[RMDB]
RNA sequence: GGGAACGACUCGAGUAGAGUCGAAAAUGUCAUUAGCAGGUUACGCACCCUUCGGUUCUGGAGCCUUGUCUUAGGGGCAUCAUGGCUUUCCAUGAAGGAGAACGUGCUAGGGACCUCAGCUUCAAUCUCCAGCUGAGACCCCGAUGACUGGCUGCCCAUCUUUGGAUGUGUUCGCACAUCCAAAGAUAAAAGAAACAACAACAACAAC
Reactivity to 2A3 in 0.01 (KOAc 150mM, MgCl2 10mM, bicine 150mM(pH8.5), 24C), signal-to-noise 3, nucleotides 027 to 156: u120g000u000c010a020u050u100a050g060c060a040g180g000u080u110a070c080g030c020a100c020c000c000u000u000c050g170g000u150u120c040u100g020g010a010g010c020c000u040u030g010u020c030u070u250a190g110g030g010g000c020a020u120c050a060u110g000g000c000u110u120u070c030c010a060u220g020a010a010g040g020a070g020a020a050c080g080u010g000c020u060a040g000g010g010a030c030c000u000c000a000g000c010u120u090c090a150a300u060c070u060c160c070a010g000c010u020g010a040g020a110c000c000c000c020g080a060u060g000a010c030u050g050g040c040u060g030c000c000c000
Reactivity to DMS in 0.01 (KOAc 150mM, MgCl2 10mM, bicine 150mM(pH8.5), 24C), signal-to-noise 2, nucleotides 027 to 156: u000g010u020c040a070u000u010a000g030c080a070g020g030u000u000a110c080g000c080a130c040c000c010u030u000c000g030g040u020u000c070u010g010g000a060g000c020c030u000u000g030u000c020u000u000a110g070g010g070g000c070a090u010c060a080u000g020g000c060u000u000u020c050c050a110u010g000a090a130g010g000a090g000a130a090c080g030u010g010c020u010a270g020g020g010a020c020c000u000c010a030g020c010u000u020c040a060a230u030c070u000c080c090a150g000c000u000g000a040g000a030c010c000c000c020g040a070u000g010a050c020u000g020g010c010u000g030c020c020c010